An RNA of 177 nucleotides, treated with 2A3 and DMS and read out base by base. For DMS, 3,568 sequencing reads were counted. The 2A3 profile rests on 6,386 reads. For 2A3 the reverse transcriptase was SuperScript II with manganese. The data come from the RNA Mapping Database (RMDB), library M2PK50. The reactions ran in a buffer of 150 mM KOAc, 10 mM MgCl2 and 150 mM bicine (pH 8.5), at 24 C. DMS adducts were read by reverse transcription with MarathonRT.
[RMDB]
RNA sequence: GGGAACGACUCGAGUAGAGUCGAAAAGCAAUGACCUUCGGGUCAUUGCAAAAUAAAACAGGCAAGUUCCAGCGUGAAAAAGGAACAAAGAUCGAAAGAUCAAAAGGGGCAUCUUCGGAUGCCCCAACUGAUAUUCAAAGUUCGCUUUGAAUAUCAGAAAAGAAACAACAACAACAAC
Reactivity to 2A3 in 0.01 (KOAc 150mM, MgCl2 10mM, bicine 150mM(pH8.5), 24C), signal-to-noise 3, nucleotides 027 to 126: g000c000a000a000u000g000a000c000c010u020u040c240g020g000g000u000c000a000u000u000g010c000a010a000a000a000u010a000a040a020a020c060a010g150g000c030a090a090g000u000u010c000c000a030g010c030g050u160g100a110a040a010a050a040g020g000a020a000c020a070a110a020g000a000u000c010g020a070a030a040g000a010u020c030a010a060a040a080g000g000g000g000c010a000u000c010u040u090c180g070g000a000u010g010c020c000c000c010a000a000
Reactivity to DMS in 0.01 (KOAc 150mM, MgCl2 10mM, bicine 150mM(pH8.5), 24C), signal-to-noise 3, nucleotides 027 to 126: g020c010a000a000u000g000a020c000c000u000u010c230g020g020g010u000c000a000u010u010g010c000a010a020a040a050u000a100a070a070a100c210a140g010g000c020a020a110g020u010u000c000c000a080g000c020g020u000g010a030a040a030a070a080g020g000a010a010c010a150a070a100g000a010u000c000g010a110a070a100g000a020u000c000a070a040a080a130g010g000g010g010c000a000u000c000u000u000c170g020g000a000u000g000c000c000c000c000a000a010